[RMDB]
RNA sequence: GGGAACGACUCGAGUAGAGUCGAAAACUGACCUUGUUCGCAAGGUCAGAAAGGGAAAUGGACUGUGCGGCGCCGACCGCCAAACAACCGGCAAAAAGAAAAAAACUGUAAGCUUCGGCUUACAGAAGACUUAUUGAUACUUCGGUAUCAAUAAGUCAAAAGAAACAACAACAACAAC
Reactivity to 2A3 in 0.01 (KOAc 150mM, MgCl2 10mM, bicine 150mM(pH8.5), 24C), signal-to-noise 4, nucleotides 027 to 126: c000u000g000a010c000c000u020u000g010u010u010c060g000c120a000a000g010g010u000c000a000g010a050a020a010g040g020g040a030a070a090u140g030g050a060c070u090g060u140g050c020g000g030c010g000c050c000g160a300c010c010g000c000c030a050a020a000c010a010a010c000c010g010g000c030a040a040a010a060a020g050a040a090a020a010a000a000a010c000u000g000u020a000a010g000c010u030u180c300g090g000c010u010u020a010c000a000g000a010a000
Reactivity to DMS in 0.01 (KOAc 150mM, MgCl2 10mM, bicine 150mM(pH8.5), 24C), signal-to-noise 3, nucleotides 027 to 126: c000u010g000a010c000c000u000u000g010u000u010c190g040c020a000a000g000g000u010c010a040g000a020a090a090g010g000g000a060a080a100u020g020g010a080c100u000g010u010g010c020g000g020c010g040c020c010g020a090c030c000g030c010c070a060a040a110c110a020a010c110c020g000g000c060a090a050a060a110a080g020a010a010a080a110a110a100a160c010u010g010u000a020a010g000c000u000u020c290g020g010c010u000u000a010c000a000g000a050a030